[RMDB]
RNA sequence: GGGAACGACUCGAGUAGAGUCGAAAACGCGGGUGGUUCGCCACCCGCGAAAUAAGAAUAUAGUGUUACUGAACAACACUUUAAUCAAAGAUCAGAAUAAAAAAACGGUCUACUUCGGUAGACCGAACACGAAUACUACGUUCGCGUAGUAUUCGUGAAAAGAAACAACAACAACAAC
Reactivity to 2A3 in 0.01 (KOAc 150mM, MgCl2 10mM, bicine 150mM(pH8.5), 24C), signal-to-noise 1, nucleotides 027 to 126: c030g000c080g060g000g000u070g070g020u090u070c140g020c100c000a030c000c010c040g040c000g020a000a000a000u020a010a010g030a130a060u300a080u240a230g020u000g020u000u030a100c050u020g030a060a010c000a020a020c000a000c030u240u060u030a040a030u040c070a140a000a000g020a100u030c020a010g070a120a080u230a160a060a020a000a000a000a010c000g020g000u000c000u000a000c010u000u100c200g090g000u000a000g000a000c020c000g000a000a010